[RMDB]
RNA sequence: GGGAACGACUCGAGUAGAGUCGAAAAAGACGCGCAGCCCUUGACGCGUCGGCGUUGCGCUGAUGCGUCUGGUACUCUAGAUACUGCAUAUCUGCUCGCUCGCACUCUCCACAUGACGCAUUGGGAUAAAUUAAUAGGAGUUCGCUCCUAUUAAUUUAAAAGAAACAACAACAACAAC
Reactivity to DMS in 0.01 (KOAc 150mM, MgCl2 10mM, bicine 150mM(pH8.5), 24C), signal-to-noise 9, nucleotides 027 to 126: a060g010a060c060g020c050g010c030a070g010c090c030c090u010u010g010a020c010g010c000g020u010c070g010g010c020g020u010u020g020c220g020c000u000g000a020u000g010c010g000u000c000u010g000g010u010a060c080u010c070u010a070g010a100u010a070c060u010g000c060a170u010a060u000c030u000g010c040u010c050g010c130u000c050g000c060a060c040u000c020u000c020c030a070c100a070u010g000a080c070g010c060a080u010u000g000g000g010a200u010
Reactivity to 2A3 in 0.01 (KOAc 150mM, MgCl2 10mM, bicine 150mM(pH8.5), 24C), signal-to-noise 9, nucleotides 027 to 126: a000g030a010c020g020c010g000c030a030g030c010c010c000u030u100g010a010c000g000c010g010u020c010g010g000c020g100u250u270g110c110g000c050u010g010a030u030g000c000g000u000c000u010g010g020u050a060c020u020c040u090a030g030a120u070a110c020u050g030c020a030u020a070u090c020u040g020c010u010c030g020c010u020c010g020c010a040c020u030c000u000c020c000a040c010a080u100g030a040c040g010c080a060u040u130g050g020g020a040u050
Annotation: Chemical mapping of a 177-nucleotide RNA with DMS and 2A3. Conditions: 150 mM KOAc, 10 mM MgCl2 and 150 mM bicine (pH 8.5), 24 C. For 2A3 the reverse transcriptase was SuperScript II with manganese.